[RMDB]
Conditions: 150 mM KOAc, 10 mM MgCl2 and 150 mM bicine (pH 8.5), 24 C. This 207-nucleotide RNA was probed chemically with 2A3. 2A3 is a SHAPE reagent: it acylates the 2'-hydroxyl of flexible nucleotides of all four kinds. The 2A3 profile rests on 1,217 reads.
RNA sequence: GGGAACGACUCGAGUAGAGUCGAAAAUCAUGUGUUCUGUGCCUUCACAGGGUCAGUUGGAAGGCUGGCACCGCUGUCUCUCCAUGUGGUUUUUCCACUUAACUAGCUUAGACUUCUUUUCAUGAUAGUUGGAUCUCAAGAGUGUUCCAAUAGGGAAGGACCACUAAUACUUCGGUAUUAGUGGUCCAAAAGAAACAACAACAACAAC
Reactivity to 2A3 in 0.01 (KOAc 150mM, MgCl2 10mM, bicine 150mM(pH8.5), 24C), signal-to-noise 3, nucleotides 027 to 156: u060c030a020u050g020u000g030u080u110c070u080g130u100g020c000c010u070u070c080a100c050a090g030g020g090u040c020a070g010u100u080g060g050a060a000g050g000c020u010g050g000c030a030c100c030g030c070u040g060u050c010u010c030u000c030c030a080u040g000u020g000g080u030u050u010u180u110c020c010a050c000u070u020a110a050c030u010a020g090c020u030u060a040g030a140c000u080u000c010u040u140u160u110c110a100u120g070a030u100a120g030u040u050g050g030a130u000c040u000c090a100a050g020a010g030u030g010u000u020c020c010a040a070u170a080g090g000g030a070a180